Chemical mapping of a 170-nucleotide RNA with 2A3 and DMS. DMS adducts were read by reverse transcription with MarathonRT. For 2A3, 7,614 sequencing reads were counted. It was measured as part of the RMDB library 15KLIB. In probing experiments dimethyl sulfate is read out at A N1 and C N3, which are open when not base-paired. Conditions: 150 mM KOAc, 10 mM MgCl2 and 150 mM bicine (pH 8.5), 24 C. 2A3 adducts were read by reverse transcription with SuperScript II with manganese.
[RMDB]
RNA sequence: GGGAACGACUCGAGUAGAGUCGAAAACCUCCCCGUCCUUGUCUUUUCUUAUUAUUCCUCGGACGUUUCCCAGCCAGGGGUUAUCCUCCUCAAGUCUCUUGAUAGUCUUGUUGACCUUCCGGAGGUCUAAGACUGCACUUCGGUGCAGUCAAAAGAAACAACAACAACAAC
Reactivity to 2A3 in 0.01 (KOAc 150mM, MgCl2 10mM, bicine 150mM(pH8.5), 24C), signal-to-noise 5, nucleotides 027 to 129: c010c010u030c000c010c000c010g040u060c010c000u050u050g020u010c020u010u060u080u020c030u100u120a210u100u070a100u130u100c010c010u030c060g030g010a020c000g000u000u030u030c010c010c010a010g040c040c030a040g010g030g000g010u020u080a090u100c000c010u010c000c000u020c050a070a090g150u010c050u010c000u010u000g020a000u000a000g010u000c020u060u070g070u020u070g030a030c000c000u020u050c040c140g130g050a000g030g000u000c010u030a040a000
Reactivity to DMS in 0.01 (KOAc 150mM, MgCl2 10mM, bicine 150mM(pH8.5), 24C), signal-to-noise 4, nucleotides 027 to 129: c000c000u010c000c030c040c030g030u040c000c000u020u010g020u010c030u000u000u000u000c070u020u050a090u020u050a150u000u000c060c010u040c050g000g000a150c110g030u040u020u010c010c010c000a130g060c040c070a060g050g020g010g010u060u040a140u050c010c040u020c010c030u000c040a040a170g000u000c010u020c030u000u000g000a040u040a060g020u020c010u000u060g020u060u050g010a090c050c010u020u090c050c050g000g040a040g010g010u020c020u020a040a120